[RMDB]
RNA sequence: GGGAACGACUCGAGUAGAGUCGAAAAGAGAAAUUCGUUUCUCGAUAGACCUUUGUGAUAAGAAGCCUAUGCAAGGCUAUGGGAUCCCAUUGGGAUCCCUAAGGCUGAUGACCAUAGGCGACUUAUCACUCUGGUACGCACAGCUGUUCGCAGCUAACACUAAUUCAAGAUUCGUCUUGAAUUAGUGAAAAGAAACAACAACAACAAC
Reactivity to DMS in 0.01 (KOAc 150mM, MgCl2 10mM, bicine 150mM(pH8.5), 24C), signal-to-noise 3, nucleotides 027 to 156: g000a050g000a020a010a060u000u000c260g020u000u000u020c010u010c000g020a210u000a070g000a050c020c010u010u000u000g000u000g010a030u000a040a040g010a040a300g000c020c000u010a010u000g020c030a130a270g030g010c010u000a270u030g020g020g000a020u020c000c000c000a300u010u010g030g040g020a020u000c000c000c010u000a010a060g020g010c010u000g000a090u010g000a170c300c010a010u000a020g020g020c000g000a110c020u000u000a020u000c000a020c000u000c020u010g020g000u010a040c070g000c050a100c080a120g030c000u000g020u000u000c150g020c040a050g000c040u010a110a280
Reactivity to 2A3 in 0.01 (KOAc 150mM, MgCl2 10mM, bicine 150mM(pH8.5), 24C), signal-to-noise 8, nucleotides 027 to 156: g040a010g000a010a090a040u190u160c150g030u010u020u010c020u010c020g040a100u140a100g100a020c000c000u000u010u010g000u000g000a000u000a010a020g020a030a000g010c000c000u000a010u010g010c050a060a220g010g000c020u020a030u060g000g000g000a000u000c020c020c130a140u210u300g010g000g000a000u000c010c000c000u010a040a010g010g000c000u020g030a190u130g020a050c050c010a000u000a000g000g000c000g000a000c000u000u000a000u000c000a000c000u000c000u000g000g010u080a140c040g070c050a080c060a090g010c000u020g050u140u150c230g020c120a010g000c020u050a090a020